[RMDB]
RNA sequence: GGGAACGACUCGAGUAGAGUCGAAAACCUGCUCGGUCAGAGCGAACCCGUAACAGCGAACAACAUCGUUCGUUUCUCCCGUCAAGCCGCCCCUGUGGCUGCCUGACACUCUUAACGGAGACGGGGUCUUGACAAGUGCUUUCGAGCACUUGUCAAGAAAAGAAACAACAACAACAAC
Reactivity to 2A3 in 0.01 (KOAc 150mM, MgCl2 10mM, bicine 150mM(pH8.5), 24C), signal-to-noise 5, nucleotides 027 to 126: c000c000u000g000c000u000c010g170g180u290c100a040g010a000g010c020g020a040a040c000c000c000g000u030a040a040c020a080g000c000g000a000a010c020a000a030c020a300u210c160g040u000u000c000g000u030u010u000c000u000c000c000c030g000u010c000a000a010g000c010c010g000c000c020c010c070u170g140u280g040g000c000u000g000c000c020u000g000a000c000a040c050u140c040u170u170a080a030c050g010g020a000g010a000c000g020g000g010g020u000
Reactivity to DMS in 0.01 (KOAc 150mM, MgCl2 10mM, bicine 150mM(pH8.5), 24C), signal-to-noise 1, nucleotides 027 to 126: c000c020u080g050c000u000c000g000g000u040c190a040g000a020g000c000g010a230a040c010c000c010g020u010a050a130c230a080g010c000g000a000a000c000a260a060c250a040u050c090g000u000u000c010g000u000u000u000c020u000c000c000c120g000u060c030a000a100g010c000c040g010c000c000c000c190u000g010u080g000g040c000u000g000c000c000u000g000a080c000a140c150u000c140u060u000a260a080c180g000g000a030g000a070c000g000g000g000g000u000